[RMDB]
RNA sequence: GGGAACGACUCGAGUAGAGUCGAAAAGAUAUGGACUGCCUUCAACAGCCUCCCAUCGGAAACGAUGGUGAGGACAUGAAGAUGUCCUAAGUCAAAAGUGGACGAAACGUUCGCGUUUCGUCCACAAGGUAUCAUCGGAGUUCGCUCCGAUGAUACCAAAAGAAACAACAACAACAAC
Reactivity to DMS in 0.01 (KOAc 150mM, MgCl2 10mM, bicine 150mM(pH8.5), 24C), signal-to-noise 2, nucleotides 027 to 126: g000a010u000a250u030g000g030a020c000u000g040c170c020u000u000c000a050a140c300a210g000c000c000u010c000c010c000a020u000c020g020g000a040a090a050c010g020a020u000g000g020u020g040a010g010g000a000c210a150u010g010a020a010g010a150u000g000u000c000c000u020a030a080g000u000c000a070a090a160a110g020u000g000g010a050c060g000a010a000a000c000g020u000u010c300g020c010g060u010u000u000c000g010u000c000c020a000c000a000a070
Reactivity to 2A3 in 0.01 (KOAc 150mM, MgCl2 10mM, bicine 150mM(pH8.5), 24C), signal-to-noise 2, nucleotides 027 to 126: g020a010u040a010u060g000g000a010c000u130g100c100c010u000u010c050a260a270c040a300g060c010c000u030c010c010c020a010u000c030g000g010a020a020a010c000g030a000u040g060g150u300g020a000g000g050a010c010a140u050g000a000a000g000a010u010g000u000c010c010u010a040a020g000u050c030a050a040a020a180g000u000g030g000a010c010g010a000a000a000c000g000u100u130c300g000c010g130u000u050u020c010g000u020c000c010a000c000a000a000